[RMDB]
The data come from the RNA Mapping Database (RMDB), library OK2TRN. The record gives the reactivity of an RNA of 177 nucleotides to DMS.
RNA sequence: GGGAACGACUCGAGUAGAGUCGAAAAGAAAUCGUGGAUCCUGGUCAGUGUACAGUCCUUCAGAUGGAUACUCUGGACAAACGGGAUCAGCAACUCAUUACAACGGUUCUCGUGCGUCGACUGUACCCCGUGAUGAUGCUUUCGAGCAUCAUCACGGAAAAGAAACAACAACAACAAC
Reactivity to DMS in 0.01 (KOAc 150mM, MgCl2 10mM, bicine 150mM(pH8.5), 24C), signal-to-noise 2, nucleotides 027 to 126: g020a060a050a030u010c080g000u000g000g010a000u000c040c020u000g010g000u020c090a090g040u000g010u000a020c050a040g000u020c020c170u010u000c090a050g000a020u000g080g020a130u030a010c300u000c000u000g020g000a020c100a010a300a060c020g020g000g000a020u010c000a100g000c160a090a070c220u020c180a050u000u000a130c140a080a140c090g010g000u000u000c000u000c000g030u000g000c300g010u000c020g000a050c000u010g000u000a040c000c020
The reactions ran in a buffer of 150 mM KOAc, 10 mM MgCl2 and 150 mM bicine (pH 8.5), at 24 C. The DMS profile rests on 1,245 reads.